[RMDB]
The record gives the reactivity of an RNA of 177 nucleotides to DMS.
It was measured as part of the RMDB library OK2TRN.
The RNA was probed in 150 mM KOAc, 10 mM MgCl2 and 150 mM bicine (pH 8.5) at 24 C.
DMS adducts were read by reverse transcription with MarathonRT.
Reactivities are given for positions 27 through 126.
RNA sequence: GGGAACGACUCGAGUAGAGUCGAAAAGCGCCUAGUCGCGCGGCGAGCAGAUCGGCGACCACGAACCCGAGGUUGUGCCGGGUACGGGCGUAAUUGGCUCCAGGGUUGCCGAGGCCGACCACGAGCACAAAAGACAGAGCUUCGGCUCUGUCUUUUGAAAAGAAACAACAACAACAAC
Reactivity to DMS in 0.01 (KOAc 150mM, MgCl2 10mM, bicine 150mM(pH8.5), 24C), signal-to-noise 1, nucleotides 027 to 126: g010c200g040c020c050u000a140g020u000c070g040c000g030c000g000g010c020g000a160g010c060a050g000a100u000c010g010g020c030g020a040c000c000a130c160g010a120a060c010c000c050g020a030g020g030u000u000g010u010g000c000c010g020g000g000u000a040c190g010g000g010c020g020u010a070a100u000u010g000g000c000u000c010c100a190g000g020g000u000u000g010c030c000g000a010g010g000c000c030g000a100c020c030a050c150g010a080g000c130a250